[RMDB]
RNA sequence: GGGAACGACUCGAGUAGAGUCGAAAAAUGAGAUCCGAUCUUGCACACUGUGCUAAUUUGAGAUUCUCAUGCCUCCUACUUGGAGAGAUCUGGACUAGAAGUCAGGGCAUCUGACUCUGCCAGCCACAAAACGUACAAGGCUUCGGCCUUGUACGAACCUUAGCGCUAAGUUCGCUUAGCGCUAAGGAAAAGAAACAACAACAACAAC
Reactivity to 2A3 in 0.01 (KOAc 150mM, MgCl2 10mM, bicine 150mM(pH8.5), 24C), signal-to-noise 5, nucleotides 027 to 156: a000u010g000a000g000a000u010c010c010g000a030u040c110u100u090g000c010a010c030a070c160u300g010u010g010c030u040a050a100u060u140u240g230a270g000a080u300u050c000u000c010a010u040g030c000c010u020c010c000u080a220c110u090u190g020g010a040g000a010g020a070u070c010u010g000g040a060c030u070a090g010a130a010g090u000c000a020g000g070g170c090a150u130c150u010g000a000c000u000c000u010g000c000c000a020g000c030c000a090c030a050a070a050a010c010g000u010a000c000a000a010g020g000c000u080u110c210g070g000c000c000u000u000g000u010a000c000g000a000a000
Reactivity to DMS in 0.01 (KOAc 150mM, MgCl2 10mM, bicine 150mM(pH8.5), 24C), signal-to-noise 1, nucleotides 027 to 156: a040u000g050a050g020a050u000c010c000g000a000u000c010u010u000g000c010a060c020a220c280u020g000u030g000c040u010a040a040u000u010u020g010a170g030a020u000u000c030u000c000a000u030g000c070c000u000c030c010u010a110c150u020u010g000g000a050g000a100g000a080u010c000u010g050g000a050c050u010a080g000a170a060g040u000c010a000g020g010g040c140a210u010c020u000g000a020c020u000c020u010g010c000c030a080g000c020c000a140c110a110a060a060a200c000g030u000a020c010a040a010g030g040c020u000u010c280g010g010c020c000u000u000g000u000a000c030g000a000a000